[RMDB]
RNA sequence: GGGAACGACUCGAGUAGAGUCGAAAAAUCAUCCGCAACGGCAACGCGGUGCUGGCGCGUACAAAGCUGAACCGGUCCUCGCGGGUGCUGUUGGCCGGACACCUGGACACCGUGCCAGUGGCCGGCAUGAGCGAAAGGGUUUCGACCCUUUCGCUCAAAAAGAAACAACAACAACAAC
Reactivity to DMS in 0.01 (KOAc 150mM, MgCl2 10mM, bicine 150mM(pH8.5), 24C), signal-to-noise 1, nucleotides 027 to 126: a050u020c220a040u010c010c060g000c030a030a050c040g050g010c030a040a070c000g030c000g010g000u000g020c050u010g010g060c140g010c230g000u030a150c240a080a080a120g000c000u000g050a050a150c010c000g000g000u050c080c020u000c070g010c020g000g000g000u000g030c020u000g000u000u000g000g000c000c010g030g000a000c020a010c160c040u010g020g000a040c010a190c300c250g000u020g020c010c010a020g010u000g010g000c000c000g000g000c010a030

The record gives the reactivity of an RNA of 177 nucleotides to DMS. The DMS profile rests on 807 reads. Values are in units of 0.01, from 0 to 300, in steps of 10. It was measured as part of the RMDB library OK2TRN. Conditions: 150 mM KOAc, 10 mM MgCl2 and 150 mM bicine (pH 8.5), 24 C.